[RMDB]
RNA sequence: GGGAACGACUCGAGUAGAGUCGAAAAGCUUUCUUUCUAUUUACCUGGAACAGUGCCUUUUUUCACAUCUCAAUAGGCCAUGGGUUGGAAACCACCUACUAUGUGCUAUACACGUGUCAUUGAGUCAGACUUUCGACUAUUUCGAUAGUCGAAAGUCAAAAGAAACAACAACAACAAC
Reactivity to 2A3 in 0.01 (KOAc 150mM, MgCl2 10mM, bicine 150mM(pH8.5), 24C), signal-to-noise 1, nucleotides 027 to 126: g010c030u000u110u020c000u010u060u000c020u070a110u110u090u080a140c030c030u040g080g000a100a060c010a030g000u040g090c040c040u070u010u040u020u130u140c080a060c050a250u000c010u020c010a030a080u070a130g000g050c010c040a000u030g090g000g020u020u030g060g000a000a060a030c000c000a000c070c000u000a020c000u000a040u140g040u090g000c010u050a040u020a210c100a000c080g020u020g020u040c010a020u010u180g020a050g110u040c010a010
Reactivity to DMS in 0.01 (KOAc 150mM, MgCl2 10mM, bicine 150mM(pH8.5), 24C), signal-to-noise 1, nucleotides 027 to 126: g020c090u000u000u000c030u030u000u000c060u000a120u000u020u010a090c070c030u000g010g000a110a040c060a000g000u000g020c050c010u000u000u000u000u000u020c070a040c080a080u020c080u010c060a080a050u010a100g020g040c060c070a060u000g000g000g030u000u010g000g050a060a090a090c050c070a100c000c000u000a070c010u010a030u000g020u010g020c080u000a120u020a100c070a050c060g000u000g000u000c060a060u020u010g030a110g020u010c210a190